[RMDB]
RNA sequence: GGGAACGACUCGAGUAGAGUCGAAAAGAAUGAGGAUGGGGAGUGUGAUGUAAGAACUGUUUUCCCAGGUAAAGAACUCUGGCAACAUUCUGCAGUCCCUGGAAAAGCUGUGUUCCCUUCAGGGGUGUAAUUGGGAACUGUUCGCAGUUCCCAAUUAAAAAGAAACAACAACAACAAC
Reactivity to 2A3 in 0.01 (KOAc 150mM, MgCl2 10mM, bicine 150mM(pH8.5), 24C), signal-to-noise 2, nucleotides 027 to 126: g030a010a070u100g030a010g060g040a070u060g000g000g060g000a040g010u060g020u130g040a150u080g040u130a120a060g020a100a030c040u070g060u010u010u030u030c000c000c000a000g000g010u050a110a040a060g030a050a000c020u020c000u060g060g000c010a040a000c000a090u080u030c030u050g000c000a030g000u070c020c030c000u010g050g000a040a070a000a000g020c090u070g040u030g010u040u030c020c010c000u010u030c000a040g000g000g020g010u120g010
Reactivity to DMS in 0.01 (KOAc 150mM, MgCl2 10mM, bicine 150mM(pH8.5), 24C), signal-to-noise 4, nucleotides 027 to 126: g000a080a070u010g010a060g000g010a100u030g010g000g000g000a060g000u020g010u020g010a090u000g010u030a120a100g010a090a040c060u010g000u000u010u010u010c030c010c010a300g000g000u010a060a120a140g000a080a080c060u000c030u000g010g010c140a070a100c060a050u010u000c010u000g020c100a120g000u010c010c000c000u000g000g000a040a080a060a100g000c070u020g010u020g010u000u000c000c010c000u000u000c080a060g010g000g000g000u010g010